An RNA of 207 nucleotides, treated with 2A3 and DMS and read out base by base. Source: RMDB library OK3TST, as collected in RNAgym. The RNA was probed in 150 mM KOAc, 10 mM MgCl2 and 150 mM bicine (pH 8.5) at 24 C. For 2A3, 839 sequencing reads were counted.
RNA sequence: GGGAACGACUCGAGUAGAGUCGAAAACUCAGCUCAUUGCAACCUCUGCCUCCCAUCCUGUGCCUCAGCCUCCAUAGCUGCUGGGGUUAACAGGUGCUCACCACAAUACCCGGCUGAUUUAUGUAUUUUUAGUAGAAAAGAGGUUUCACCAUGGUGAGCUGACUAUCAUAUUCGUAUGAUAGUCAGCAAAAGAAACAACAACAACAAC
Reactivity to 2A3 in 0.01 (KOAc 150mM, MgCl2 10mM, bicine 150mM(pH8.5), 24C), signal-to-noise 1, nucleotides 027 to 156: c020u000c000a020g010c020u040c020a110u000u130g010c040a100a030c000c020u090c030u080g040c000c020u010c000c020c000a020u080c010c000u000g000u030g030c000c000u000c000a000g000c000c000u010c060c050a160u090a180g030c140u040g000c000u000g040g020g000g000u010u010a030a000c000a000g000g000u000g030c020u050c000a010c020c000a060c000a050a060u070a080c010c040c000g050g000c030u020g030a040u000u110u090a090u130g060u020a040u020u080u000u010u130a030g020u050a010g070a060a080a040a000g070a030g000g000u040u000u000c040a030c030c000a050u070g000g000u030g010a020
Reactivity to DMS in 0.01 (KOAc 150mM, MgCl2 10mM, bicine 150mM(pH8.5), 24C), signal-to-noise 1, nucleotides 027 to 156: c010u010c020a120g000c030u000c060a060u010u010g040c000a010a100c000c010u000c000u000g020c040c010u000c060c010c000a170u000c010c000u000g060u010g000c040c020u000c000a000g010c000c030u000c060c100a110u000a130g050c050u000g000c010u000g000g010g030g030u010u010a030a010c000a030g000g050u010g000c030u000c040a090c060c050a040c030a030a090u000a080c030c030c050g020g000c020u010g010a110u000u000u010a040u050g010u000a050u000u000u010u030u000a080g010u000a100g000a060a060a060a100g000a060g030g020u010u000u000c030a040c050c020a100u010g000g050u000g010a120